The record gives the reactivity of an RNA of 207 nucleotides to 2A3 and DMS.
It was measured as part of the RMDB library OK3TST.
DMS adducts were read by reverse transcription with MarathonRT.
The RNA was probed in 150 mM KOAc, 10 mM MgCl2 and 150 mM bicine (pH 8.5) at 24 C.
Values are in units of 0.01, from 0 to 300, in steps of 10.

RNA sequence: GGGAACGACUCGAGUAGAGUCGAAAACAGGCAGUGAGUAUCUGACACCUGGCAGUAGCAGCAGUCUGAGUUACUGCAGUGUGGCCAGUCAUGGUGCAUUGGUAUCCUCCUCCGACACAACCGAUCAUGGGGUUAGCACUGCAGGUGGCUCGGAGGACACCUACUAAGGUUUCGACCUUAGUAGGUGAAAAGAAACAACAACAACAAC
Reactivity to 2A3 in 0.01 (KOAc 150mM, MgCl2 10mM, bicine 150mM(pH8.5), 24C), signal-to-noise 2, nucleotides 027 to 156: c030a010g050g020c000a020g010u060g080a050g050u100a060u060c050u050g060a020c030a030c040c030u010g050g000c010a020g020u100a020g020c050a010g000c030a030g100u050c060u120g070a040g050u100u060a020c000u010g010c010a010g000u030g010u040g040g020c040c020a030g070u080c030a050u080g070g020u050g030c060a090u060u090g050g000u140a150u070c010c030u020c010c020u060c030c020g040a030c020a000c010a100a110c010c040g030a060u100c030a080u110g000g000g000g060u070u050a030g010c020a010c030u030g000c020a020g070g060u040g040g010c010u000c010g000g000a010g000g030a010
Reactivity to DMS in 0.01 (KOAc 150mM, MgCl2 10mM, bicine 150mM(pH8.5), 24C), signal-to-noise 3, nucleotides 027 to 156: c040a060g020g040c000a070g020u000g010a150g030u000a070u000c030u000g010a100c030a090c030c020u000g020g090c040a060g030u010a120g030c020a120g010c020a120g000u000c070u000g010a200g030u000u010a040c010u000g010c000a040g020u020g010u000g010g010c000c010a100g000u000c040a060u000g010g030u010g000c040a160u000u020g020g000u010a100u000c040c020u000c030c030u000c050c030g020a090c080a080c030a050a060c060c030g000a110u010c070a100u000g010g010g000g020u000u010a120g040c000a050c020u000g000c000a060g020g020u010g020g020c020u000c020g020g010a040g000g000a230